RNA sequence: GGGAACGACUCGAGUAGAGUCGAAAACAAGCAUAUAUGCACCCACAGUAGCCCUCUUGUAGAGACAGCUGUGGAUUUUAAUCUGUGAUAGGACAGAGACCCAAGCUGAAGGGCUCAGGGGUCCAGGCUCUGAUGGAAGAGAGGAAUCAGGAAAGAACUCAGAGAAAAGAUUCGUCUUUUCUCUGAGAAAAGAAACAACAACAACAAC
Reactivity to 2A3 in 0.01 (KOAc 150mM, MgCl2 10mM, bicine 150mM(pH8.5), 24C), signal-to-noise 1, nucleotides 027 to 156: c070a030a030g040c040a050u100a090u090a050u200g050c040a020c000c010c010a080c010a020g050u080a010g030c010c030c020u020c010u180u160g100u170a020g020a030g010a050c000a020g030c010u020g000u220g120g020a020u070u090u120u120a010a080u000c010u000g020u020g080a160u130a160g070g030a010c010a010g010a010g020a050c000c000c000a010a010g010c020u050g030a080a030g010g000g010c010u050c020a010g000g000g000g000u000c060c030a010g050g010c000u050c060u130g020a050u090g000g060a040a000g040a000g010a000g020g100a080a020u040c030a040g100g000a000a040a120g070a040a030
The record gives the reactivity of an RNA of 207 nucleotides to 2A3. The 2A3 profile rests on 555 reads. The RNA was probed in 150 mM KOAc, 10 mM MgCl2 and 150 mM bicine (pH 8.5) at 24 C.